This 177-nucleotide RNA was probed chemically with 2A3 and DMS. For DMS, 1,171 sequencing reads were counted. 2A3 adducts were read by reverse transcription with SuperScript II with manganese. In probing experiments dimethyl sulfate is read out at A N1 and C N3, which are open when not base-paired. For DMS the reverse transcriptase was MarathonRT.
[RMDB]
RNA sequence: GGGAACGACUCGAGUAGAGUCGAAAAUGUUCAACGCAAGUUGAACGUCUUCAGUGACGGUUUGUCAGACUCUGUAGGCUGAGUUGGUUCGGGUGUUCUGGUUAUGGCAACCAGAACUAACGGACUGGAAACGGUAUCACUUCGGUGAUACCGUUUCAAAAGAAACAACAACAACAAC
Reactivity to 2A3 in 0.01 (KOAc 150mM, MgCl2 10mM, bicine 150mM(pH8.5), 24C), signal-to-noise 1, nucleotides 027 to 126: u110g000u020u000c010a010a000c010g050c040a050a060g000u020u030g020a010a000c000g000u000c000u030u010c000a220g040u000g070a010c040g160g300u090u300u300g060u030c000a000g000a040c000u010c000u030g080u150a080g150g000c110u060g010a000g090u160u110g060g000u020u000c020g010g010g020u030g000u010u000c000u000g070g020u100u070a270u300g300g000c040a000a010c000c010a010g000a000a000c000u000a000a000c000g010g000a000c060u040g070
Reactivity to DMS in 0.01 (KOAc 150mM, MgCl2 10mM, bicine 150mM(pH8.5), 24C), signal-to-noise 1, nucleotides 027 to 126: u000g010u000u050c000a010a000c010g000c300a090a170g010u000u000g010a020a010c000g010u000c030u000u000c010a250g000u000g030a030c040g020g000u000u000u000g000u000c020a160g000a050c030u000c020u040g000u000a130g030g000c080u000g000a030g020u000u000g020g000u000u000c010g000g000g020u010g000u000u000c000u000g000g000u000u000a090u000g000g000c300a020a010c000c000a000g000a000a000c000u010a140a150c030g010g010a010c030u000g010